[RMDB]
RNA sequence: GGGAACGACUCGAGUAGAGUCGAAAAUUCCCAAACCCCCGGAAGUUGCCCGCACAGCGUCCAUCUUGGAACCGUCUCGAUCCAAGGCACGCCAAACCUCUGGAACCCACCCGAGAGGCAUUUCUCGCCGUAUUACACGGUUCGCCGUGUAAUACGGAAAAGAAACAACAACAACAAC
Reactivity to DMS in 0.01 (KOAc 150mM, MgCl2 10mM, bicine 150mM(pH8.5), 24C), signal-to-noise 2, nucleotides 027 to 126: u000u010c020c000c020a050a230a200c020c000c030c000c020g000g010a060a130g050u010u070g050c100c020c010g000c070a090c130a070g030c020g070u000c050c070a090u050c050u000u060g000g000a020a060c080c070g000u000c090u000c010g000a050u010c030c050a040a030g010g010c120a040c050g000c070c080a020a190a060c020c020u020c020u000g040g000a120a040c000c000c030a110c010c040c040g000a110g010a020g010g020c200a080u000u030u000c000u010c180g000
Reactivity to 2A3 in 0.01 (KOAc 150mM, MgCl2 10mM, bicine 150mM(pH8.5), 24C), signal-to-noise 2, nucleotides 027 to 126: u030u010c010c000c010a000a050a040c040c000c000c000c000g030g020a070a040g130u110u070g060c000c000c000g000c010a050c020a040g010c000g030u030c040c000a040u040c030u030u070g040g000a060a030c060c020g090u080c040u050c040g050a060u000c000c010a020a010g030g000c020a010c020g040c030c010a050a100a070c010c000u020c010u020g040g040a080a070c030c000c000a040c000c000c000g040a050g010a000g080g000c040a030u040u080u010c020u030c020g020